[RMDB]
RNA sequence: GGGAACGACUCGAGUAGAGUCGAAAAGAAACAUGGUUCGCCAUGUUUCAAAGAAGCUCAUAAUGACGCAAACAACGGCGUCGCCGUGUGCAAACGGCGAAAAAAGACUUAUCUUCGGAUAAGUCAACGAACUAAAAUAGUUCGCUAUUUUAGUUCGAAAAGAAACAACAACAACAAC
Reactivity to DMS in 0.01 (KOAc 150mM, MgCl2 10mM, bicine 150mM(pH8.5), 24C), signal-to-noise 7, nucleotides 027 to 126: g000a010a010a000c000a000u000g000g010u000u010c240g030c000c010a000u000g010u000u000u010c000a040a090a110g000a120a100g010c030u010c030a130u020a090a120u010g000a040c020g010c010a040a070a120c200a110a090c180g010g000c020g010u000c010g010c010c000g010u000g000u000g010c230a090a090a030c010g000g010c000g010a000a030a050a090a060a080g000a020c000u000u000a000u000c000u000u020c180g020g000a010u000a000a010g010u000c000a050a100
Reactivity to 2A3 in 0.01 (KOAc 150mM, MgCl2 10mM, bicine 150mM(pH8.5), 24C), signal-to-noise 8, nucleotides 027 to 126: g000a000a010a000c000a000u010g000g030u040u040c110g030c060c000a000u000g000u000u000u000c000a010a000a000g060a050a020g030c010u020c070a090u110a280a130u260g010a010c010g000c020a050a150a170c050a120a080c140g080g010c010g010u010c020g000c000c000g020u060g050u130g080c040a090a120a030c010g010g000c030g020a030a010a000a000a000a010g000a000c000u000u000a000u010c010u030u060c220g050g000a000u000a000a000g000u000c000a000a000
The record gives the reactivity of an RNA of 177 nucleotides to DMS and 2A3.
The data come from the RNA Mapping Database (RMDB), library M2PK50.
2A3 adducts were read by reverse transcription with SuperScript II with manganese.
The 2A3 profile rests on 21,577 reads.